[RMDB]
RNA sequence: GGGAACGACUCGAGUAGAGUCGAAAAGAUAUGGAUGUUCCUGUUUCUCGUCGAACUCGGAAACGAGCGAGAGAUGCAGGAGACAUCCUAAGUCAAAUCAUCAUCUGCGUUCGCGCAGAUGAUGAAAGAUAGCAGGAUACUUCGGUAUCCUGCUAUCAAAAGAAACAACAACAACAAC
Reactivity to 2A3 in 0.01 (KOAc 150mM, MgCl2 10mM, bicine 150mM(pH8.5), 24C), signal-to-noise 4, nucleotides 027 to 126: g030a040u090a050u180g000g000a000u010g010u030u000c000c000u010g010u010u050u020c070u030c050g300u050c000g110a300a300c010u000c000g030g050a060a090a050c020g000a030g040c010g000a030g000a000g000a030u020g000c020a000g030g000a040g000a000c000a010u010c000c000u010a140a010g050u020c040a040a050a140u020c010a000u000c000a000u010c000u000g020c000g040u030u070c250g000c000g000c190a000g000a000u000g000a000u000g010a020a010a010
Reactivity to DMS in 0.01 (KOAc 150mM, MgCl2 10mM, bicine 150mM(pH8.5), 24C), signal-to-noise 3, nucleotides 027 to 126: g020a050u020a300u000g000g010a000u000g000u000u000c000c000u010g010u000u000u000c000u000c000g000u010c090g010a110a100c020u000c000g010g000a100a110a180c000g010a020g000c010g000a180g000a020g000a010u000g000c020a010g010g000a020g000a010c000a010u010c000c010u000a000a050g010u020c030a080a090a140u000c000a000u000c000a000u000c000u000g000c010g000u000u000c280g010c000g020c000a000g000a010u000g000a000u000g000a020a050a090